Record summary:
An RNA of 177 nucleotides, treated with DMS and 2A3 and read out base by base. DMS adducts were read by reverse transcription with MarathonRT. It was measured as part of the RMDB library OK2TST.

RNA sequence: GGGAACGACUCGAGUAGAGUCGAAAAGCCGUAGGAAGCCAUGUGCUGCUGUAAUUGGUCAGGCUCAUUACGGGGAUCGUUGGUUAUAUCACAGCUUGCACCGGGCCAAGGAUGGACUAACGGGUCAAGGUUUUACUGAUUUCGAUCAGUAAAACCUAAAAGAAACAACAACAACAAC
Reactivity to DMS in 0.01 (KOAc 150mM, MgCl2 10mM, bicine 150mM(pH8.5), 24C), signal-to-noise 2, nucleotides 027 to 126: g010c010c010g000u010a000g010g010a210a100g000c010c010a100u000g020u010g020c060u010g020c150u000g010u010a120a110u010u010g000g030u000c040a070g010g010c010u010c080a160u020u000a030c060g010g010g010g010a060u010c040g020u010u000g010g010u010u010a080u000a040u000c040a030c020a070g000c000u000u000g010c150a100c170c130g010g000g000c000c030a070a100g010g000a030u010g020g000a040c010u000a020a040c030g020g020g000u000c070a090
Reactivity to 2A3 in 0.01 (KOAc 150mM, MgCl2 10mM, bicine 150mM(pH8.5), 24C), signal-to-noise 2, nucleotides 027 to 126: g040c000c010g000u030a010g010g090a030a060g010c020c000a140u040g040u130g040c030u000g030c050u100g090u250a140a190u170u120g050g000u050c040a030g050g000c000u020c010a020u030u130a020c050g020g000g030g030a020u020c010g000u010u040g050g000u040u060a140u030a000u280c020a010c020a000g020c000u030u170g020c080a130c150c040g000g010g000c020c000a010a020g060g000a040u020g040g000a000c010u020a060a000c020g070g000g000u050c080a070

2A3 adducts were read by reverse transcription with SuperScript II with manganese. For DMS, 2,312 sequencing reads were counted.